[RMDB]
Overview:
Chemical mapping of a 177-nucleotide RNA with DMS and 2A3. The DMS profile rests on 1,003 reads. Conditions: 150 mM KOAc, 10 mM MgCl2 and 150 mM bicine (pH 8.5), 24 C. DMS adducts were read by reverse transcription with MarathonRT. Values cover nucleotides 27 to 126.
RNA sequence: GGGAACGACUCGAGUAGAGUCGAAAACUAAUGAUGCAAACGUGCUGCUUGACAUAGAAAACACCUACAUAAAGGGCAUACUUUAUUGUGAUUCGCCUCUUAAUAAGUUGAAGUGUCAGCAACAGAGAUUACAAGCUCCUUUCGAGGAGCUUGUAAUAAAAGAAACAACAACAACAAC
Reactivity to DMS in 0.01 (KOAc 150mM, MgCl2 10mM, bicine 150mM(pH8.5), 24C), signal-to-noise 2, nucleotides 027 to 126: c010u010a030a120u010g000a110u000g000c090a050a050a260c110g020u030g010c080u000g010c030u000u000g020a070c030a020u000a020g020a130a070a080a040c050a060c090c120u010a060c200a080u010a020a060a060g030g000g030c020a120u000a040c030u000u000u000a080u030u000g010u010g010a140u000u020c210g000c040c000u010c030u010u020a050a080u000a090a080g000u010u000g000a190a180g000u010g000u000c040a030g020c000a010a010c040a030g010a200g010
Reactivity to 2A3 in 0.01 (KOAc 150mM, MgCl2 10mM, bicine 150mM(pH8.5), 24C), signal-to-noise 2, nucleotides 027 to 126: c060u090a100a110u210g200a060u180g070c020a140a070a110c070g080u090g010c030u000g000c010u040u180g000a010c010a010u040a040g080a030a090a070a020c050a000c010c060u120a080c060a090u180a040a050a010g020g020g000c080a050u090a090c020u000u230u080a140u210u140g050u030g080a090u080u040c080g050c000c000u040c020u170u050a160a100u080a180a000g010u010u010g050a090a010g000u000g000u050c000a000g060c010a010a000c010a010g160a000g000